[RMDB]
RNA sequence: GGGAACGACUCGAGUAGAGUCGAAAACAAGAAGAGGAGGAUUCCCCGAGACGCUGACGGAAACCCCGGGAACAAGGAAACAGGAGGAGGAUCGGUAGAAAAGAGCGAGACCUCCGAUUCGAGAGCUACAGUCUGAUGUUCGCAUCAGACAAAAGAAACAACAACAACAAC
Reactivity to 2A3 in 0.01 (KOAc 150mM, MgCl2 10mM, bicine 150mM(pH8.5), 24C), signal-to-noise 9, nucleotides 027 to 129: c070a030a020g060a010a010g020a030g010g010a000g020g020a040u070u090c020c000c000c000g030a020g010a030c060g010c090u080g010a030c050g040g000a040a050a040c020c000c010c010g030g000g000a020a020c040a030a020g050g000a040a040a010c040a030g030g030a010g020g010a000g010g000a040u030c030g020g030u080a050g100a040a110a040a010g060a020g040c050g010a020g040a090c000c000u000c020c000g010a010u040u070c040g020a030g000a000g050c040u100a060c040a040
Reactivity to DMS in 0.01 (KOAc 150mM, MgCl2 10mM, bicine 150mM(pH8.5), 24C), signal-to-noise 9, nucleotides 027 to 129: c120a080a050g000a050a040g000a080g000g030a040g020g000a100u000u000c050c010c010c010g000a060g030a070c150g030c090u010g000a060c120g030g030a040a070a140c030c020c010c010g000g000g000a070a040c070a030a000g000g000a020a030a040c110a040g000g000a090g030g020a050g030g020a140u020c050g020g040u020a080g020a050a020a110a070g000a080g010c020g020a080g000a070c070c020u020c030c050g000a100u040u020c060g000a080g010a030g040c050u020a080c120a130
Description
Structure probing data (2A3 and DMS) for a 170-nucleotide construct. Source: RMDB library 15KLIB, as collected in RNAgym. Conditions: 150 mM KOAc, 10 mM MgCl2 and 150 mM bicine (pH 8.5), 24 C.